[RMDB]
RNA sequence: GGGAACGACUCGAGUAGAGUCGAAAAACUCUGUUCAUCAGAGACCUGUCUAACUUGACAAUAAACAUUGACAGAUUUGUGAUAGUCGGUAAGAUACAUGACAGCUGCGCAGCAUCACUUCACGCGCCCUCCGCUAUCCGUUCGCGGAUAGCGGAGGAAAAGAAACAACAACAACAAC
Reactivity to 2A3 in 0.01 (KOAc 150mM, MgCl2 10mM, bicine 150mM(pH8.5), 24C), signal-to-noise 1, nucleotides 027 to 126: a000c000u000c000u000g010u050u060c040a300u140c000a000g000a000g000a000c030c040u000g000u000c000u000a290a300c000u100u300g000a000c000a060a130u050a030a210a000c030a300u000u000g020a180c050a130g170a260u030u040u000g090u000g130a090u060a050g010u040c000g000g000u000a040a050g020a080u060a110c180a090u300g080a000c000a000g000c000u040g000c000g000c000a000g040c100a260u080c000a000c010u040u070c030a080c130g000c010g060c010